[RMDB]
RNA sequence: GGGAACGACUCGAGUAGAGUCGAAAAGAUAUGGACCAGAACUACGCACCGGGUUUCGUUGAAAUCGGAAACGAUGGAGAAACAGGUGCGCUGGUCCUAAGUCAAAAGGAGCGCUUCGGCGCUCCAAGGACGUAAUUAAGUUCGCUUAAUUACGUCCAAAAGAAACAACAACAACAAC
Reactivity to DMS in 0.01 (KOAc 150mM, MgCl2 10mM, bicine 150mM(pH8.5), 24C), signal-to-noise 4, nucleotides 027 to 126: g000a040u000a300u000g000g000a010c000c010a010g000a110a080c110u020a300c030g020c000a010c010c000g010g020g000u000u000u000c010g010u000u000g000a090a130a020u010c000g000g000a120a060a150c010g010a020u000g000g010a070g010a010a010a010c000a190g000g000u000g000c000g000c000u000g000g020u000c010c000u000a000a050g000u000c040a070a080a090a110g000g000a020g010c000g030c010u000u010c170g020g020c020g010c010u000c000c000a010a030
Reactivity to 2A3 in 0.01 (KOAc 150mM, MgCl2 10mM, bicine 150mM(pH8.5), 24C), signal-to-noise 4, nucleotides 027 to 126: g030a010u090a040u130g000g010a000c000c020a010g000a090a120c300u300a030c180g010c000a000c000c010g300g220g180u000u000u000c030g060u170u060g010a050a040a010u010c010g020g010a050a040a030c000g000a000u000g010g010a030g000a020a020a000c000a020g000g010u000g000c000g000c010u000g010g000u000c010c010u000a020a000g040u010c020a000a000a080a170g010g000a010g000c010g020c030u080u180c300g150g000c000g010c010u030c000c000a000a010